[RMDB]
RNA sequence: GGGAACGACUCGAGUAGAGUCGAAAAGCCAGCGCGCUGGUGCGGCCCGGCUCGGCUGAAGAGGUCGCCGAAGUGCUGCGGGUGUGCCGGGACGCUGGAGCCUAUGUCACCGUUCAAGGCGGCCGCAACGAGAGGAUCCCUUCGGGGAUCCUCUCGUAAAAGAAACAACAACAACAAC
Reactivity to 2A3 in 0.01 (KOAc 150mM, MgCl2 10mM, bicine 150mM(pH8.5), 24C), signal-to-noise 1, nucleotides 027 to 126: g090c000c000a000g000c000g010c000g010c000u050g030g000u020g000c040g090g080c010c010c000g000g000c050u050c000g020g000c140u300g060a100a030g220a040g170g030u060c000g000c000c050g090a200a080g100u130g030c080u070g050c030g000g000g000u120g000u000g000c000c000g000g000g070a000c000g000c000u020g000g000a000g080c000c000u110a150u300g000u080c040a000c030c050g070u080u190c180a120a130g000g000c080g000g000c010c000g100c000a000